[RMDB]
RNA sequence: GGGAACGACUCGAGUAGAGUCGAAAAUGGUCGUCAAGUACCUGGACGUCUUUCUGUCUAUGGGAUGUUCGGCCCCUAAGCCAUGCCUGGUCAACGUCCCCAGGGGCUACAGGAGGUUCAAGCAGUCUAGACAACCCAGAUUCGUCUGGGUUGUCUAAAAAGAAACAACAACAACAAC
Reactivity to DMS in 0.01 (KOAc 150mM, MgCl2 10mM, bicine 150mM(pH8.5), 24C), signal-to-noise 1, nucleotides 027 to 126: u010g070g000u000c020g030u000c090a050a120g020u010a100c020c020u000g020g000a010c060g000u020c230u030u000u000c100u010g010u000c060u000a070u020g000g010g000a120u010g010u000u000c000g030g000c000c000c080c040u000a060a110g010c030c090a150u030g020c100c030u000g000g000u000c120a130a090c160g010u000c020c130c000c050a070g010g020g010g020c020u000a050c110a050g020g000a060g000g000u000u000c150a100a100g010c090a030g000u030c050
Description
Source: RMDB library OK2TST, as collected in RNAgym. An RNA of 177 nucleotides, treated with DMS and read out base by base. The RNA was probed in 150 mM KOAc, 10 mM MgCl2 and 150 mM bicine (pH 8.5) at 24 C. Reactivities are given for positions 27 through 126.